[RMDB]
RNA sequence: GGGAACGACUCGAGUAGAGUCGAAAACAGGCGAUUCGCGCGCAGACCAUCGAUGCCGCCUGGCAACUGUUCGCUGAGGACGCGAUCGGCUCGCUUCAGGUCGGCAAGUACGCGGAUAUGGUGGUGCCCCUUUAUCGAAGUUCGCUUCGAUAAAGGGAAAAGAAACAACAACAACAAC
Reactivity to 2A3 in 0.01 (KOAc 150mM, MgCl2 10mM, bicine 150mM(pH8.5), 24C), signal-to-noise 2, nucleotides 027 to 126: c030a010g030g080c040g110a100u070u020c040g010c000g000c010g020c100a010g060a070c010c000a030u070c010g110a070u070g000c000c010g010c020c000u010g010g010c000a030a040c010u030g010u070u020c000g000c030u070g100a110g220g180a060c040g000c010g020a000u000c010g030g010c070u070c130g020c000u220u120c040a020g020g080u240c110g010g000c000a010a010g020u040a020c040g000c020g060g000a060u060a090u140g050g000u050g000g000u050g010c000
Reactivity to DMS in 0.01 (KOAc 150mM, MgCl2 10mM, bicine 150mM(pH8.5), 24C), signal-to-noise 3, nucleotides 027 to 126: c140a100g010g010c030g000a130u000u000c030g020c030g000c040g000c040a100g010a180c050c040a070u010c090g000a170u000g020c000c000g020c020c020u010g010g020c010a050a050c020u000g020u000u000c010g020c010u000g000a150g020g030a210c300g000c000g000a020u000c000g010g020c020u000c180g010c000u000u010c020a000g030g010u010c010g020g010c010a010a050g030u010a020c040g020c020g010g010a060u010a090u010g010g010u000g000g010u000g000c080
This 177-nucleotide RNA was probed chemically with 2A3 and DMS.
Conditions: 150 mM KOAc, 10 mM MgCl2 and 150 mM bicine (pH 8.5), 24 C.
Reactivities are given for positions 27 through 126.
For DMS, 3,283 sequencing reads were counted.
Values are in units of 0.01, from 0 to 300, in steps of 10.
DMS adducts were read by reverse transcription with MarathonRT.